Chemical mapping of a 177-nucleotide RNA with 2A3.
RNA sequence: GGGAACGACUCGAGUAGAGUCGAAAAUAGAAAAUCUACUUUUGGGGAAAGAGUGGUGGCCUUUGCUGCUGUAGAAGGAGUUUUCUUCUCAGGAUCUUUUGCUGCUAUAUUCUGGCUAAAGAAGAGAGUAUGUCGCGUGAUUCGUCACGCGACAUACAAAAGAAACAACAACAACAAC
Reactivity to 2A3 in 0.01 (KOAc 150mM, MgCl2 10mM, bicine 150mM(pH8.5), 24C), signal-to-noise 1, nucleotides 027 to 126: u250a020g120a000a160a000a040u030c010u000a010c000u010u060u060u040g020g000g000g160a000a060a040g030a050g040u030g060g000u050g000g040c000c010u000u040u220g000c010u030g030c050u040g060u210a020g010a090a080g030g040a050g000u090u050u010u080c030u010u010c090u010c030a050g120g020a050u050c010u000u100u020u020g000c020u020g070c000u000a000u010a050u300u000c050u010g020g060c030u050a000a070a210g020a110a080g070a000g000a040
2A3 adducts were read by reverse transcription with SuperScript II with manganese.